Source: RMDB library TTRINS, as collected in RNAgym. An RNA of 177 nucleotides, treated with DMS and read out base by base. For DMS the reverse transcriptase was MarathonRT. The DMS profile rests on 2,127 reads. The RNA was probed in 150 mM KOAc, 10 mM MgCl2 and 150 mM bicine (pH 8.5) at 24 C. Values cover nucleotides 27 to 126.
RNA sequence: GGGAACGACUCGAGUAGAGUCGAAAAGAUAUGGAGUGUGCGGCUGGAGGCGAAGAACUUAGGCUCCCCACCUUCUCGGAAACGAGAAGAGGCCUAAGGGAGCCUUUGGUCGCACACUCCUAAGUCAGAAGAGAGUAAUGUUCGCAUUACUCUCUUCAAAAGAAACAACAACAACAAC
Reactivity to DMS in 0.01 (KOAc 150mM, MgCl2 10mM, bicine 150mM(pH8.5), 24C), signal-to-noise 3, nucleotides 027 to 126: g020a040u010a300u000g000g010a020g030u000g000u000g000c000g020g010c010u000g020g020a010g000g000c000g000a070a220g010a120a180c010u000u000a000g000g000c010u000c090c000c010c060a300c080c000u000u000c000u010c000g000g000a140a130a270c010g000a020g000a030a000g010a090g020g000c000c010u000a000a000g000g000g000a120g000c010c000u000u000u000g010g010u010c020g010c020a010c010a000c000u000c000c000u000a000a050g000u010c060a180